Structure probing data (2A3 and DMS) for a 177-nucleotide construct. For 2A3 the reverse transcriptase was SuperScript II with manganese. Values cover nucleotides 27 to 126. For DMS the reverse transcriptase was MarathonRT.
[RMDB]
RNA sequence: GGGAACGACUCGAGUAGAGUCGAAAAACGAAGGCCGGUGAGCAGUAAGCCGGACGGUCCCCUCGCGGCCGAUCCUCUGGAGCUCUGCUCUAAGAUCUUCGCUGCUGAGGCCCGCGCCGCCGCUCUUAAAUUAAAUCUAGUUCGCUAGAUUUAAUUUAAAAGAAACAACAACAACAAC
Reactivity to 2A3 in 0.01 (KOAc 150mM, MgCl2 10mM, bicine 150mM(pH8.5), 24C), signal-to-noise 1, nucleotides 027 to 126: a010c060g020a090a030g030g070c050c070g100g060u100g030a000g010c060a060g120u100a040a010g030c040c000g030g020a000c000g020g040u040c060c000c030c000u020c030g010c060g000g000c000c000g000a010u010c000c010u030c020u010g000g020a010g000c010u040c210u300g010c000u030c010u140a070a040g010a030u020c000u170u090c080g010c000u040g040c040u090g020a010g000g030c010c000c000g000c130g000c000c000g000c000c000g010c020u000c030u040u020
Reactivity to DMS in 0.01 (KOAc 150mM, MgCl2 10mM, bicine 150mM(pH8.5), 24C), signal-to-noise 2, nucleotides 027 to 126: a130c050g020a160a130g000g000c040c000g000g010u000g010a050g020c020a080g000u010a060a130g020c130c030g030g010a070c030g000g000u000c090c160c020c030u010c070g020c050g010g030c030c180g010a000u010c010c010u000c040u010g000g000a040g010c020u000c150u000g000c000u000c000u010a040a070g000a040u010c010u000u000c220g020c000u000g020c020u000g020a030g010g010c150c000c010g000c120g000c000c030g030c040c180g000c020u000c030u000u000